[RMDB]
RNA sequence: GGGAACGACUCGAGUAGAGUCGAAAAGCUGCCUGAAACCUCGCUGUUUUCUUGGCUAACUUUCAGCGAGGUGAGGCAAGGCGGCAAAAAAAAGUUGGGAGCAGCAACGGCAAGCAAAAAAAAAGUUACAAGUUGCGAUGGUUCGCCAUCGCAACAACUCCACUAUCUGGUUCGCCAGAUAGUGGAGAAAAGAAACAACAACAACAAC
Reactivity to 2A3 in 0.01 (KOAc 150mM, MgCl2 10mM, bicine 150mM(pH8.5), 24C), signal-to-noise 1, nucleotides 027 to 156: g000c010u000g010c010c000u010g010a080a010a030c000c000u000c000g000c000u010g020u000u020u020u010c110u130u180g100g020c050u010a010a010c000u000u030u010c000a000g000c010g010a000g000g000u020g010a040g010g030c060a000a010g000g000c020g020g010c060a000a010a090a000a050a000a010a030g010u030u050g030g000g020a040g040c020a000g000c020a040a030c050g020g000c040a030a000g030c080a000a110a050a000a000a000a000a000a000g010u000u010a010c020a090a050g000u000u000g000c000g010a000u000g020g050u030u060c170g060c070c000a000u000c000g000c000a000a000c000a000a000

Chemical mapping of a 207-nucleotide RNA with 2A3. The 2A3 profile rests on 1,299 reads. It was measured as part of the RMDB library M2RFPK. The reactions ran in a buffer of 150 mM KOAc, 10 mM MgCl2 and 150 mM bicine (pH 8.5), at 24 C.